[RMDB]
RNA sequence: GGGAACGACUCGAGUAGAGUCGAAAAACACCUCCCAGGUCCUCGUGUGUACCUGGUUGAGAGGCUCAUUGCUUGUGAAAAUCCAUUCAUGGUUAACCAAUUGGCUUAUAGCUCUAGUGCAAAUGGCGUGCGUUAUAAAGUUCGCUUUAUAACGCACAAAAGAAACAACAACAACAAC
Reactivity to 2A3 in 0.01 (KOAc 150mM, MgCl2 10mM, bicine 150mM(pH8.5), 24C), signal-to-noise 2, nucleotides 027 to 126: a010c030a040c010c010u010c050c010c000a000g050g000u000c010c030u130c070g130u080g050u020g040u200a010c000c010u000g000g000u030u140g040a040g010a010g000g000c030u010c030a060u020u100g010c030u030u040g020u010g030a030a040a020a040u030c020c010a050u060u110c050a080u080g020g000u080u110a040a060c030c020a080a080u040u030g030g000c010u040u070a030u070a130g000c000u000c010u100a050g020u040g130c030a040a000a100u040g020g010c040
Reactivity to DMS in 0.01 (KOAc 150mM, MgCl2 10mM, bicine 150mM(pH8.5), 24C), signal-to-noise 3, nucleotides 027 to 126: a040c100a180c060c020u000c040c000c010a040g000g010u000c020c040u020c300g020u000g010u000g020u000a020c020c000u010g010g000u010u010g010a050g000a070g010g010c050u000c090a060u000u000g010c050u000u010g020u010g010a080a040a090a120u000c010c030a050u010u000c100a090u000g010g000u000u010a090a080c090c030a080a090u010u000g020g020c070u010u000a070u000a070g010c030u000c060u010a060g000u010g010c060a040a050a080u000g010g000c150